[RMDB]
RNA sequence: GGGAACGACUCGAGUAGAGUCGAAAAUCGUCCGCGUCCGUGUCGUAGACGUAGUACUCACCGACGCCGUCCUCGUCGCUCGAGGGCAGUCCCGCAGUGAGAUAGAAGUCGUCGCCGUUGGGCUGGGCGCUUUUACCGUAUUCGUACGGUAAAAGCGAAAAGAAACAACAACAACAAC
Reactivity to 2A3 in 0.01 (KOAc 150mM, MgCl2 10mM, bicine 150mM(pH8.5), 24C), signal-to-noise 7, nucleotides 027 to 126: u090c020g030u020c010c020g020c040g040u010c030c010g070u070g050u060c050g030u050a060g010a080c030g020u030a040g070u030a060c010u000c020a020c010c030g050a040c030g020c030c020g020u020c000c000u030c020g100u090c090g060c120u110c030g010a030g000g000g020c010a010g030u050c020c020c040g000c030a010g010u020g030a030g020a030u090a060g170a130a020g060u050c040g010u010c020g010c030c010g020u050u080g040g000g000c020u020g020g020g030
Reactivity to DMS in 0.01 (KOAc 150mM, MgCl2 10mM, bicine 150mM(pH8.5), 24C), signal-to-noise 5, nucleotides 027 to 126: u030c050g000u000c010c040g010c090g010u020c010c040g000u000g000u030c080g020u020a100g010a040c040g030u020a080g000u060a050c010u010c000a020c000c080g010a100c210g020c070c050g010u010c000c010u000c010g010u020c290g020c160u030c010g010a010g000g010g000c000a060g000u000c110c120c050g020c100a070g010u000g000a030g020a100u020a060g020a120a100g000u020c010g010u000c030g000c030c060g030u010u010g020g020g010c010u010g000g010g000